[RMDB]
RNA sequence: GGGAACGACUCGAGUAGAGUCGAAAAGGAGUUGAAGAAGCCCGACGACGGGGUUGUGGUCGAGUUGAAGAAUCCCGGGCUCUGCUGCCAGCCGAAGCCGAAGGGGAACGCGCCCACGGUGCCGCUGACAAGCCUUAUGCUUCGGCAUAAGGCUUGUAAAAGAAACAACAACAACAAC
Reactivity to DMS in 0.01 (KOAc 150mM, MgCl2 10mM, bicine 150mM(pH8.5), 24C), signal-to-noise 1, nucleotides 027 to 126: g030g010a240g000u010u000g000a180a130g000a200a180g000c070c000c050g000a210c090g020a110c100g030g040g000g000u000u050g010u000g000g100u020c050g010a070g000u010u000g000a040a060g010a130a160u010c040c010c030g020g000g010c000u020c040u000g000c090u000g020c060c030a070g000c030c070g010a050a100g000c000c020g030a040a250g030g000g000g000a120a030c080g000c080g000c110c000c060a030c040g000g020u000g000c080c050g010c070u030g000